RNA sequence: GGGAACGACUCGAGUAGAGUCGAAAAGAAAGCUGGUCAUCCGUUCGGACCAGAAAGGCAGUCACAGACGAAACCUGAGGAAACAGGAAGCCACAACAAAAGCCAUGUGAUUAGCGAACGGAAAGAAAGGCGUACGAUAGUUCGCUAUCGUACGCCUAAAAGAAACAACAACAACAAC
Reactivity to 2A3 in 0.01 (KOAc 150mM, MgCl2 10mM, bicine 150mM(pH8.5), 24C), signal-to-noise 2, nucleotides 027 to 126: g150a040a250a010g080c000u010g010g000u020c000a140u000c000c000g000u000u000c000g010g010a000c000c000a000g120a000a000a000g000g020c040a020g000u040c000a010c000a190g110a150c000g050a160a120a040c000c000u050g000a150g190g080a300a100a030c000a000g010g010a010a010g000c010c010a070c050a240a030c020a000a240a000a000g070c070c000a020u050g000u010g090a070u000u100a050g000c010g000a000a000c000g000g040a110a020a000g070a000a020
Reactivity to DMS in 0.01 (KOAc 150mM, MgCl2 10mM, bicine 150mM(pH8.5), 24C), signal-to-noise 1, nucleotides 027 to 126: g060a050a150a200g000c030u000g000g000u000c030a030u030c000c060g000u000u000c000g000g000a010c000c000a000g010a060a090a230g000g010c000a240g000u000c000a140c040a190g030a120c060g000a050a050a040c090c000u000g000a220g000g010a050a120a230c000a020g000g000a270a090g050c130c220a080c100a090a000c000a210a190a050a000g000c080c000a040u000g000u000g000a060u000u000a100g180c000g000a000a000c000g000g020a170a220a090g000a030a070

Chemical mapping of a 177-nucleotide RNA with 2A3 and DMS.
For DMS, 756 sequencing reads were counted.
It was measured as part of the RMDB library OK1LIB.
The reactions ran in a buffer of 150 mM KOAc, 10 mM MgCl2 and 150 mM bicine (pH 8.5), at 24 C.